Source information:
Chemical mapping of a 177-nucleotide RNA with 2A3 and DMS. For DMS, 2,550 sequencing reads were counted. Source: RMDB library OK2TST, as collected in RNAgym. Values are in units of 0.01, from 0 to 300, in steps of 10. The 2A3 profile rests on 2,292 reads. DMS (dimethyl sulfate) methylates the pairing face of unpaired adenines and cytosines.
[RMDB]
RNA sequence: GGGAACGACUCGAGUAGAGUCGAAAAAUACCACGUUUGGCUCACCGGUGAAUUUCUGAGCCGAUGCACUCGGACGUAAUUCUUGAAUUUGCUGAGCAAGAGUCAGCGUCAGCACGGUAACAAUGACUGUGUUCAAUACGUUCGCGUAUUGAACACAAAAAGAAACAACAACAACAAC
Reactivity to 2A3 in 0.01 (KOAc 150mM, MgCl2 10mM, bicine 150mM(pH8.5), 24C), signal-to-noise 3, nucleotides 027 to 126: a020u130a010c020c020a000c020g020u150u220u080g010g030c000u000c020a050c010c020g050g000u050g040a030a040u060u130u050c030u040g030a010g020c000c010g000a020u120g040c060a080c120u000c000g040g030a040c060g100u100a100a180u120u000c020u040u060g030a030a000u010u020u040g000c020u010g000a100g070c100a170a060g020a000g000u020c010a000g000c000g010u030c030a020g060c040a000c040g070g000u120a210a050c060a120a080u120g060a020c050
Reactivity to DMS in 0.01 (KOAc 150mM, MgCl2 10mM, bicine 150mM(pH8.5), 24C), signal-to-noise 3, nucleotides 027 to 126: a120u010a120c010c020a110c060g000u010u010u000g010g000c030u000c000a160c060c010g010g010u000g000a030a030u000u000u000c100u000g010a080g000c010c000g020a040u000g000c200a210c170u010c020g010g010a130c130g010u010a080a110u020u010c070u010u010g000a050a010u010u000u000g000c010u000g000a100g010c110a090a070g010a040g010u010c010a020g010c030g020u000c080a070g020c080a030c130g000g020u010a030a060c160a070a080u000g010a100c100